This 177-nucleotide RNA was probed chemically with 2A3.
RNA sequence: GGGAACGACUCGAGUAGAGUCGAAAAUGGCUAGCGUGCGCUCUGAUAAAGCAUCAUUCGAUUUGAUCACAGAUCGCACAAAUGAAACUUGAUCCAUAUUCAAGCAGAGCUCAUAAAAGGACGAUAAAGGACGUAUCACCUUCGGGUGAUACGUCCUAAAAGAAACAACAACAACAAC
Reactivity to 2A3 in 0.01 (KOAc 150mM, MgCl2 10mM, bicine 150mM(pH8.5), 24C), signal-to-noise 1, nucleotides 027 to 126: u180g020g000c000u000a010g000c000g000u000g000c000g000c030u080c000u000g140a100u000a150a160a000g170c070a000u090c100a090u040u040c110g250a250u130u050u000g130a000u000c000a000c030a130g130a000u010c050g030c000a000c000a080a050a050u110g020a050a000a000c000u000u000g000a000u060c090c230a080u170a160u210u180c000a000a000g040c000a000g130a000g060c000u000c050a080u280a140a240a000a130g100g000a000c040g000a000u000a170a270
It was measured as part of the RMDB library OK1LIB.